The data come from the RNA Mapping Database (RMDB), library OK2TST. The record gives the reactivity of an RNA of 177 nucleotides to DMS.

RNA sequence: GGGAACGACUCGAGUAGAGUCGAAAAAGCUACGCGGAUAAGUACAACUGUGCCGUGGUCUGUGUGAAUCAGGUGGCCACCAGGGACGGUCAGGAUGAGAUUCCCUGCUUGGGAUUGCAGUGGGCGAGCUACCACUACGCUUCGGCGUAGUGGUAGCAAAAGAAACAACAACAACAAC
Reactivity to DMS in 0.01 (KOAc 150mM, MgCl2 10mM, bicine 150mM(pH8.5), 24C), signal-to-noise 1, nucleotides 027 to 126: a100g000c040u000a050c030g000c030g000g000a070u000a090a120g020u010a140c130a060a120c070u020g020u010g040c030c030g050u000g040g080u000c020u010g000u000g020u000g000a100a140u000c100a060g020g020u010g000g020c120c010a040c060c050a040g000g000g020a040c030g020g000u000c010a030g000g010a090u000g000a150g000a210u000u000c000c000c000u010g000c120u010u000g000g000g010a050u020u000g000c050a040g000u010g040g010g000c110g000a100
For DMS the reverse transcriptase was MarathonRT.